[RMDB]
RNA sequence: GGGAACGACUCGAGUAGAGUCGAAAAGGGGUCAGUAUCCCUCCGAGGAAAGGACAUGCUCUGAAGCCUCCACGGAGCAACAGCCUUUCUACCCACCGGAGGGUACUGACGGAGGCACCCAAACCUAAUCGAAACUCUUCGGAGUUUCGAUUAGGAAGAUAUACGACCCGUUCGCGGGUCGUAUAUCAAAAGAAACAACAACAACAAC
Reactivity to 2A3 in 0.01 (KOAc 150mM, MgCl2 10mM, bicine 150mM(pH8.5), 24C), signal-to-noise 2, nucleotides 027 to 156: g060g010g000g000u020c000a020g010u090a300u300c020c000c000u020c000c010g010a040g030g010a000a000a010g020g000a030c020a110u190g010c000u030c010u000g090a130a040g010c000c000u000c000c000a010c030g000g010a010g060c050a090a000c040a070g080c010c000u000u020u000c000u030a090c070c090c070a060c060c020g000g000a000g000g050g000u000a000c000u000g000a000c040g000g000a000g020g000c010a030c020c010c000a070a070a150c010c000u000a000a000u000c000g000a010a000a000c010u010c020u100u140c290g170g000a000g020u000u000u000c000g000a000u000u000a000g000g000a000a030
Chemical mapping of a 207-nucleotide RNA with 2A3.
The RNA was probed in 150 mM KOAc, 10 mM MgCl2 and 150 mM bicine (pH 8.5) at 24 C.
The data come from the RNA Mapping Database (RMDB), library RNAMAK.